[RMDB]
RNA sequence: GGGAACGACUCGAGUAGAGUCGAAAAUUGUUGAAAUGCGAAACAGUGGUGGCGCUACUAACCAUAUGCGUGUCACUGAACAGAUAUUUGUGUCCGACGCUCAAGGCGAUCGCUCCUAUCCAACUCUAACCAUGAACCGAUUCAUCACAAACGGUACCCCUAUGUGGAUCUUCGGAUCCACAUAGGGAAAAGAAACAACAACAACAAC
Reactivity to DMS in 0.01 (KOAc 150mM, MgCl2 10mM, bicine 150mM(pH8.5), 24C), signal-to-noise 1, nucleotides 027 to 156: u000u000g000u000u000g000a150a170a160u000g020c040g000a140a090a210c090a060g040u000g020g000u000g000g020c010g010c000u000a090c070u000a070a140c200c140a180u000a000u000g020c060g090u000g010u000c000a000c000u020g010a020a090c050a070g000a150u000a040u000u000u000g030u000g020u020c000c030g020a100c060g010c030u000c060a090a140g060g010c000g020a090u000c070g000c010u010c000c010u000a060u000c020c060a040a070c120u000c030u000a050a070c000c070a060u000g010a080a110c030c060g020a170u010u000c060a080u000c030a080c100a070a090a000c050g000g020u010a110c070
Reactivity to 2A3 in 0.01 (KOAc 150mM, MgCl2 10mM, bicine 150mM(pH8.5), 24C), signal-to-noise 2, nucleotides 027 to 156: u030u020g030u010u020g030a000a030a100u170g010c020g040a040a030a040c020a000g000u020g070g000u120g080g000c010g000c030u100a070c010u020a080a140c030c020a080u060a030u250g000c000g000u040g030u020c010a000c030u000g010a030a010c030a010g090a040u060a110u140u130u140g150u020g020u030c030c000g000a010c020g020c060u040c120a080a120g080g000c030g050a050u020c010g000c000u030c000c000u030a090u050c050c010a020a100c030u030c040u120a090a080c040c000a060u100g050a000a010c020c020g120a170u110u140c060a050u080c060a140c080a110a100a030c050g040g000u130a090c020